[RMDB]
This 177-nucleotide RNA was probed chemically with DMS. In probing experiments dimethyl sulfate is read out at A N1 and C N3, which are open when not base-paired. For DMS, 3,514 sequencing reads were counted. The reactions ran in a buffer of 150 mM KOAc, 10 mM MgCl2 and 150 mM bicine (pH 8.5), at 24 C. Source: RMDB library TTRINS, as collected in RNAgym. For DMS the reverse transcriptase was MarathonRT.
RNA sequence: GGGAACGACUCGAGUAGAGUCGAAAAGAUAUGGAAUGGUUGUAGGGAGUAUGUCUGUCGAAUCCGCAAUCGGAAACGAUUGAUGGAUUCGACAGACAUACUUUGAUCUACACCCAUUCCUAAGUCACCUAGUCAUCUAGUUCGCUAGAUGACUAGGAAAAGAAACAACAACAACAAC
Reactivity to DMS in 0.01 (KOAc 150mM, MgCl2 10mM, bicine 150mM(pH8.5), 24C), signal-to-noise 2, nucleotides 027 to 126: g000a070u000a300u020g010g010a030a000u000g000g000u010u000g010u000a010g010g010g000a020g010u000a000u010g010u000c000u000g000u010c000g000a030a010u010c000c000g010c000a000a020u000c000g020g000a130a120a270c020g020a010u000u000g010a050u000g020g000a020u000u000c000g000a000c000a000g010a010c010a000u010a000c000u000u000u010g000a070u020c000u000a010c000a010c030c000c010a000u000u000c000c000u000a010a090g010u000c040a300